[RMDB]
RNA sequence: GGGAACGACUCGAGUAGAGUCGAAAAUCACUGGACUUCGGUCCAGUGAAAAAGAAAGACGGACGGCGAACGUCAAACGCUGACGUACGAAAGUACGAAUAAAAAGUACGCCCUUCGGGGCGUACAACAAUAAUACGCGGUUCGCCGCGUAUUAUUGAAAAGAAACAACAACAACAAC
Reactivity to 2A3 in 0.01 (KOAc 150mM, MgCl2 10mM, bicine 150mM(pH8.5), 24C), signal-to-noise 3, nucleotides 027 to 126: u010c000a010c000u010g000g010a000c010u010u060c260g070g010u000c000c010a010g010u000g010a000a000a000a010a000g090a020a030a000g110a020c030g020g020a010c030g010g050c020g060a130a030c010g130u110c110a070a080a020c060g030c040u040g040a010c020g010u010a010c000g030a120a000a000g000u000a000c020g030a070a010u140a110a100a010a000a000g000u000a000c010g010c010c000c000u010u040c170g020g010g000g020c000g000u000a000c000a000a000
Reactivity to DMS in 0.01 (KOAc 150mM, MgCl2 10mM, bicine 150mM(pH8.5), 24C), signal-to-noise 4, nucleotides 027 to 126: u000c010a010c000u000g020g020a010c000u000u000c190g020g010u000c000c000a000g010u000g000a000a030a050a090a090g010a090a080a080g000a270c020g000g000a040c050g000g010c040g020a050a040c020g000u000c130a050a080a140c050g010c050u000g000a300c010g010u000a010c010g000a120a070a150g010u000a020c000g010a130a070u020a060a040a080a130a110g000u000a000c000g020c000c000c000u010u010c190g020g000g010g000c000g010u000a000c000a040a040
Background:
Structure probing data (2A3 and DMS) for a 177-nucleotide construct. Source: RMDB library M2PK50, as collected in RNAgym. For DMS the reverse transcriptase was MarathonRT.